[RMDB]
RNA sequence: GGGAACGACUCGAGUAGAGUCGAAAAGACAUAGAAAUGCUUGCAGAUGUAACCCGGAGUGCCUGCCACAAAGCUAUGCAGAUAGCUGAACCGGACACUGCAAGCGAAGUGAAAAGAUUAACAGGAGGAGGAACACCGCGUUCGCGUGGUGUUCCUCAAAAGAAACAACAACAACAAC
Reactivity to DMS in 0.01 (KOAc 150mM, MgCl2 10mM, bicine 150mM(pH8.5), 24C), signal-to-noise 2, nucleotides 027 to 126: g050a150c100a040u030a140g000a150a180a050u040g000c000u000u000g020c000a000g000a140u040g000u000a080a090c180c030c040g000g010a100g000u000g010c050c150u020g020c040c010a000c020a070a040a010g010c020u000a000u000g010c300a100g010a040u000a010g000c010u000g020a150a240c000c020g000g060a170c040a020c010u000g000c040a010a000g010c030g000a000a080g010u060g000a010a060a110a070g040a050u050u040a110a080c120a080g000g010a180g020
Reactivity to 2A3 in 0.01 (KOAc 150mM, MgCl2 10mM, bicine 150mM(pH8.5), 24C), signal-to-noise 2, nucleotides 027 to 126: g020a000c060a160u140a030g010a020a190a040u170g060c000u090u000g030c080a040g010a300u040g120u010a020a080c000c000c050g000g020a050g050u170g000c000c300u090g160c000c000a120c040a070a090a030g060c030u010a060u120g000c020a010g100a270u060a020g010c030u010g000a000a000c000c000g060g000a010c000a000c030u000g000c040a000a000g000c000g000a000a000g030u040g000a020a020a010a010g020a100u020u170a020a170c040a060g150g000a010g120
This 177-nucleotide RNA was probed chemically with DMS and 2A3. The 2A3 profile rests on 847 reads. Reactivities are given for positions 27 through 126. The data come from the RNA Mapping Database (RMDB), library OK1LIB. Reactivities are rounded to 0.1 and cut off at 0 and 3. The RNA was probed in 150 mM KOAc, 10 mM MgCl2 and 150 mM bicine (pH 8.5) at 24 C. For DMS the reverse transcriptase was MarathonRT. As a SHAPE reagent, 2A3 marks flexible, mostly unpaired nucleotides at the ribose 2'-OH.